[RMDB]
RNA sequence: GGGAACGACUCGAGUAGAGUCGAAAACUUCUUCGGUCAACCUCCGAAGUUCCUCUUCCUCUUCCCUGCUGAGGGACUUUCCCCCGGAGGAGAGCUGCCUCUUCUUGUUCUCCAGGGCCUUCCUUCUCUACGGUACCGUUCGCGGUACCGAAAAGAAACAACAACAACAAC
Reactivity to DMS in 0.01 (KOAc 150mM, MgCl2 10mM, bicine 150mM(pH8.5), 24C), signal-to-noise 1, nucleotides 027 to 129: c120u020u030c080u020u010c050g010g000u000c100a090a190c060c050u030c020c020g020a100a030g020u020u000c050c010u050c070u030u000c000c000u030c070u010u050c040c010c020u040g050c110u020g030a070g010g000g020a100c140u050u040u010c000c000c000c000c000g000g000a100g030g010a060g020a050g060c070u010g020c060c000u020c070u000u070c020u010u060g010u030u000c070u020c020c000a080g000g000g000c040c110u030u020c030c020u010u060c030u030c020u000a220
Reactivity to 2A3 in 0.01 (KOAc 150mM, MgCl2 10mM, bicine 150mM(pH8.5), 24C), signal-to-noise 5, nucleotides 027 to 129: c030u080u050c010u050u030c020g010g010u050c050a090a090c030c030u040c010c030g020a030a010g020u040u030c000c010u040c000u040u020c010c030u060c000u040u050c000c000c000u040g040c060u060g080a050g010g020g010a030c000u030u050u040c000c000c000c010c020g040g000a030g040g010a020g020a000g020c040u090g050c000c010u020c000u070u000c010u040u100g020u070u020c050u000c040c010a030g010g030g020c000c000u000u020c000c000u000u040c040u000c000u050a050